An RNA of 177 nucleotides, treated with 2A3 and DMS and read out base by base. The DMS profile rests on 3,372 reads. It was measured as part of the RMDB library M2PK50.

RNA sequence: GGGAACGACUCGAGUAGAGUCGAAAAGAAGACAACUUCGGUUGUCUUCAAGGGGCUGUUUUUCUCGCUGACUUUCAGCCCAAAACAAAAGAGUCAGGAAAACGAGACUACCCUUCGGGGUAGUCAAAACAUCGCAGUAAUUCGUUACUGCGAUGUUAAAAGAAACAACAACAACAAC
Reactivity to 2A3 in 0.01 (KOAc 150mM, MgCl2 10mM, bicine 150mM(pH8.5), 24C), signal-to-noise 2, nucleotides 027 to 126: g000a000a010g000a000c010a000a000c010u050u090c150g100g020u010u000g010u010c010u010u000c000a010a000g030g010g000g010c000u000g010u000u000u000u040u000c060u020c050g120c030u000g000a010c010u000u030u020c010a000g000c000c030c000a010a030a000a000c010a000a000a010a010g010a010g000u000c000a010g000g030a010a070a000a000c090g030a060g010a130c000u000a000c000c010c020u020u080c170g040g000g000g000u000a000g000u010c000a000a010
Reactivity to DMS in 0.01 (KOAc 150mM, MgCl2 10mM, bicine 150mM(pH8.5), 24C), signal-to-noise 3, nucleotides 027 to 126: g000a010a010g010a010c010a000a000c000u000u010c130g020g010u000u000g000u000c000u000u000c000a040a080g010g000g010g030c000u000g000u000u000u000u000u000c060u000c030g000c000u000g000a020c000u000u000u000c000a010g010c000c000c000a060a010a030a160c140a010a010a030a010g000a000g040u000c010a020g000g000a050a060a060a080c230g000a170g000a010c010u000a000c000c000c010u000u010c220g020g000g010g010u000a000g010u000c000a010a030